Description:
Chemical mapping of a 177-nucleotide RNA with 2A3 and DMS. For 2A3, 11,250 sequencing reads were counted. Source: RMDB library TTRDEL, as collected in RNAgym. DMS (dimethyl sulfate) methylates the pairing face of unpaired adenines and cytosines. Conditions: 150 mM KOAc, 10 mM MgCl2 and 150 mM bicine (pH 8.5), 24 C.
RNA sequence: GGGAACGACUCGAGUAGAGUCGAAAAGAUAUGGAUGGUAGCGAUAAGCCACCAUCGGAAACGAUGGAAUGGCUUUUGACGCUGAGAGUCCUAAGUCAAAACGGCUUUUUCUUCGGAAAAAGCCGAACCUGUAUGAAUGGUUCGCCAUUCAUACAGGAAAAGAAACAACAACAACAAC
Reactivity to 2A3 in 0.01 (KOAc 150mM, MgCl2 10mM, bicine 150mM(pH8.5), 24C), signal-to-noise 4, nucleotides 027 to 126: g020a010u020a010u070g000g010a000u040g030g160u160a010g010c010g000a060u050a300a020g000c000c000a010c010c010a010u000c000g000g000a030a010a010c000g000a000u020g000g060a300a300u190g010g000c000u020u010u070u050g020a010c000g010c000u010g030a060g020a030g220u000c000c000u000a020a000g020u010c040a000a000a080a140c020g010g000c010u020u000u010u010u000c010u040u060c130g050g000a000a000a000a000a000g000c020c010g000a000a000
Reactivity to DMS in 0.01 (KOAc 150mM, MgCl2 10mM, bicine 150mM(pH8.5), 24C), signal-to-noise 6, nucleotides 027 to 126: g010a020u000a090u000g000g010a020u000g010g030u000a010g010c000g030a060u010a020a020g020c000c000a070c000c000a000u000c000g010g000a030a020a050c000g010a020u000g000g000a120a130u010g020g020c000u000u000u000u000g010a280c010g000c000u000g000a090g000a190g010u000c000c010u000a010a110g010u000c010a070a060a110a250c030g010g000c000u000u000u000u000u000c000u000u010c230g020g000a000a010a000a010a010g000c000c000g000a010a020